[RMDB]
RNA sequence: GGGAACGACUCGAGUAGAGUCGAAAAACAUUGAGAAGAUGAUUGGCGCCGUGUCGAACGGCGGUGGGAAUAGUGGCGGUGAUAAUGAUCCGGAGGACUAUUACCGCGACCGCAGGAAGAAGGACAAACGAUGAGUACCUUUCGAGGUACUCAUCGUAAAAGAAACAACAACAACAAC
Reactivity to DMS in 0.01 (KOAc 150mM, MgCl2 10mM, bicine 150mM(pH8.5), 24C), signal-to-noise 2, nucleotides 027 to 126: a130c080a040u000u000g000a100g010a110a100g000a060u000g010a100u000u000g010g000c030g010c010c040g010u000g000u040c200g000a110a060c030g000g000c020g020g020u010g020g000g000a120a060u010a060g000u000g010g010c030g020g010u010g010a080u000a030a100u020g020a180u000c010c020g010g020a140g010g010a050c050u000a010u000u000a030c020c000g000c020g000a030c040c070g010c070a090g000g010a080a070g000a090a040g010g000a050c120a070a060
Reactivity to 2A3 in 0.01 (KOAc 150mM, MgCl2 10mM, bicine 150mM(pH8.5), 24C), signal-to-noise 1, nucleotides 027 to 126: a000c020a040u100u180g020a080g020a180a120g050a060u080g010a050u050u230g130g000c020g000c000c000g000u030g090u170c110g040a040a020c000g030g000c030g030g000u100g000g000g000a000a170u050a160g030u040g140g040c010g000g010u030g010a010u000a150a100u120g060a050u010c050c080g180g060a110g000g100a020c010u000a000u060u030a020c010c000g000c000g050a030c020c020g060c000a030g060g000a050a000g020a020a000g010g010a020c050a030a160
An RNA of 177 nucleotides, treated with DMS and 2A3 and read out base by base. DMS adducts were read by reverse transcription with MarathonRT. Reactivities are given for positions 27 through 126. For DMS, 1,963 sequencing reads were counted. The RNA was probed in 150 mM KOAc, 10 mM MgCl2 and 150 mM bicine (pH 8.5) at 24 C.